[RMDB]
RNA sequence: GGGAACGACUCGAGUAGAGUCGAAAAGGCGCGUCCUCCUACGGUGAUCCCGUGGCGAGCCUCUCGGGGCCGUCGUAACGCGCGGAAAGGUGUCGGUCGGUGGUCGCGAGGCCGCCGGCUUAAGGGACGUGCUAAACCCGGCGAAAGCCUGCCCUGUCGAAUAUAUCACGUUCGCGUGAUAUAUUCGAAAAGAAACAACAACAACAAC
Reactivity to 2A3 in 0.01 (KOAc 150mM, MgCl2 10mM, bicine 150mM(pH8.5), 24C), signal-to-noise 2, nucleotides 027 to 156: g020g020c020g010c000g000u010c000c010u060c020c050u070a040c030g090g070u120g070a150u140c050c000c000g000u040g030g000c020g020a080g010c010c000u060c000u070c120g020g000g020g000c010c000g010u020c010g010u060a200a020c060g000c000g020c080g080g040a130a120a000g090g020u100g050u130c070g010g000u000c000g020g010u010g000g020u030c010g000c000g040a060g000g000c010c000g000c000c000g000g000c000u010u040a010a020g030g000g000a000c010g020u020g010c000u000a030a030a050c010c010c030g030g000c020g060a030a050a030g010c020c010u050g020c000c020c000u020g030u030